This 177-nucleotide RNA was probed chemically with 2A3 and DMS. The RNA was probed in 150 mM KOAc, 10 mM MgCl2 and 150 mM bicine (pH 8.5) at 24 C. 2A3 adducts were read by reverse transcription with SuperScript II with manganese. Source: RMDB library RFM100, as collected in RNAgym. For DMS the reverse transcriptase was MarathonRT.
[RMDB]
RNA sequence: GGGAACGACUCGAGUAGAGUCGAAAACAGGCAGCCAGGAGCCAGGGCUUCCAUAGGCCCAGCUCUGUACCUGUAGGGGGAUGGAAUCUGCUAAAAGUGUUCUGGAGUCGUUCUUGGAUAUCUGCUUAGGAGUUUUAUAUUUCGAUAUAAAACUCCUAAAAGAAACAACAACAACAAC
Reactivity to 2A3 in 0.01 (KOAc 150mM, MgCl2 10mM, bicine 150mM(pH8.5), 24C), signal-to-noise 2, nucleotides 027 to 126: c020a020g030g040c020a020g090c020c000a060g050g000a010g000c000c080a200g040g010g010c040u190u020c170c040a120u150a180g040g000c010c000c000a000g000c000u000c000u020g060u020a060c010c010u060g020u100a070g010g000g010g010g060a050u090g010g010a050a100u000c020u060g020c010u100a110a000a050a090g090u140g030u150u060c030u070g070g000a000g010u010c000g000u020u000c000u000u000g020g000a030u040a060u200c060u070g060c090u100u000
Reactivity to DMS in 0.01 (KOAc 150mM, MgCl2 10mM, bicine 150mM(pH8.5), 24C), signal-to-noise 1, nucleotides 027 to 126: c050a010g020g030c040a070g020c110c050a170g010g000a050g020c000c020a080g000g000g010c000u010u000c140c180a240u060a170g000g000c000c070c000a300g000c000u000c000u000g020u030a110c060c020u010g010u000a120g000g070g000g000g000a110u000g000g020a190a010u020c000u000g000c090u000a060a080a050a060g000u000g000u000u010c020u000g000g000a050g020u000c000g040u000u000c020u000u000g060g000a030u040a040u000c010u050g050c190u000u000